Background: An RNA of 177 nucleotides, treated with DMS and 2A3 and read out base by base. It was measured as part of the RMDB library RFM100. The 2A3 profile rests on 637 reads.
RNA sequence: GGGAACGACUCGAGUAGAGUCGAAAAUUAGCGUAAACUUAAAUAAUUCGCAGAAAUAACGCCUUACAAAAAACCAAAGGUUGUCCUCGGUUGUGCCCUGAAUUUCGGAUAAAGUCCAAGUAAUACUUCCUGUAAGAGAUUUCGAUCUCUUACAGGAAAAAGAAACAACAACAACAAC
Reactivity to DMS in 0.01 (KOAc 150mM, MgCl2 10mM, bicine 150mM(pH8.5), 24C), signal-to-noise 2, nucleotides 027 to 126: u030u000a130g040c030g000u010a030a120a090c130u060u060a110a050a090u070a060a250u000u020c040g000c000a140g000a040a170a030u020a240a130c090g010c020c040u000u040a030c080a000a040a060a050a100a030c100c040a040a100a030g000g020u010u000g000u000c000c020u000c040g000g020u010u000g040u020g000c000c000c000u000g000a070a060u000u010u010c030g020g040a060u010a030a150a060g010u000c010c030a030a150g000u010a060a110u010a030c130u010
Reactivity to 2A3 in 0.01 (KOAc 150mM, MgCl2 10mM, bicine 150mM(pH8.5), 24C), signal-to-noise 2, nucleotides 027 to 126: u000u000a020g010c000g010u050a140a080a060c100u080u130a060a030a140u200a100a280u080u060c000g010c140a100g080a020a130a010u100a040a020c060g000c050c000u060u100a040c080a010a170a000a010a070a020c020c010a000a050a010g130g000u000u000g070u010c000c010u010c010g000g000u040u070g040u070g070c000c030c010u030g160a180a190u010u060u150c050g010g010a010u030a120a090a000g070u000c020c060a000a000g020u030a020a120u000a200c080u000